[RMDB]
RNA sequence: GGGAACGACUCGAGUAGAGUCGAAAAUUAAAUGAUGUAGUACGGCCGCCACUGAAGGACGGCUCCUCUCCGAAAGGAGAGUUGAGUAGAGUGUGAGCAGGACCGGGUGCUAGUCACUGGUGAAAAACACCGAAACAUAGUUCGCUAUGUUUCGGUGAAAAGAAACAACAACAACAAC
Reactivity to DMS in 0.01 (KOAc 150mM, MgCl2 10mM, bicine 150mM(pH8.5), 24C), signal-to-noise 2, nucleotides 027 to 126: u000u010a050a110a080u000g000a050u010g000u000a020g000u010a050c050g000g000c010c010g010c030c010a040c010u000g010a110a080g000g000a130c130g000g000c010u010c020c000u000c000u000c000c000g000a100a110a200g010g000a010g000a010g000u010u000g010a020g050u000a080g010a100g010u000g010u000g010a110g020c030a080g000g020a100c130c010g020g010g020u000g000c010u000a060g010u010c020a040c070u010g010g010u020g000a040a060a050a080a100
The record gives the reactivity of an RNA of 177 nucleotides to DMS. Values are in units of 0.01, from 0 to 300, in steps of 10. DMS (dimethyl sulfate) methylates the pairing face of unpaired adenines and cytosines. DMS adducts were read by reverse transcription with MarathonRT. The RNA was probed in 150 mM KOAc, 10 mM MgCl2 and 150 mM bicine (pH 8.5) at 24 C.